[RMDB]
RNA sequence: GGGAACGACUCGAGUAGAGUCGAAAAAAGGGCGAUAAGCGAGUGGAGGAGCGCACUCUCCUUAAACGGCGUACGUUUUAAAUUAGACGACAACGAUAAUUUUGCAAUGGCAGCCUAAGGGCAGCCCGUCUUGCCUGAGAGUACCACGGCUUGGGUAGUUAAACUUAUAGUUCGCUAUAAGUUUAACAAAAGAAACAACAACAACAAC
Reactivity to DMS in 0.01 (KOAc 150mM, MgCl2 10mM, bicine 150mM(pH8.5), 24C), signal-to-noise 2, nucleotides 027 to 156: a100a060g000g010g010c020g010a120u000a060a150g020c070g010a090g030u020g040g010a080g040g000a080g030c020g040c060a120c020u000c020u000c000c030u000u010a040a040a090c060g000g010c060g050u000a100c060g020u000u000u000u000a030a060a170u010u000a070g000a100c010g000a100c050a050a070c030g000a130u000a050a110u000u000u000u000g000c050a070a080u000g030g010c030a110g050c020c020u010a060a140g050g000g020c030a070g020c000c000c000g000u000c030u000u000g000c030c030u010g000a080g010a110g020u000a090c000c020a070c030g000g010c040u000u000g020g000g060u010a100
Reactivity to 2A3 in 0.01 (KOAc 150mM, MgCl2 10mM, bicine 150mM(pH8.5), 24C), signal-to-noise 3, nucleotides 027 to 156: a010a000g080g000g000c070g020a090u070a120a030g020c010g040a020g030u080g020g030a080g010g010a020g010c040g010c030a040c020u050c010u030c010c000u060u050a080a100a010c040g030g010c020g030u070a050c020g030u020u000u020u110a080a190a130u080u060a030g020a050c030g030a040c080a100a020c070g060a060u060a160a120u120u130u140u130g030c050a060a060u040g030g020c030a020g010c020c020u050a050a080g040g000g000c000a010g000c000c000c000g010u020c040u040u050g000c000c010u020g010a020g000a000g020u030a060c020c020a020c040g030g000c000u010u020g030g000g000u020a080
About this RNA
The record gives the reactivity of an RNA of 207 nucleotides to DMS and 2A3. It was measured as part of the RMDB library RSTRND. Conditions: 150 mM KOAc, 10 mM MgCl2 and 150 mM bicine (pH 8.5), 24 C.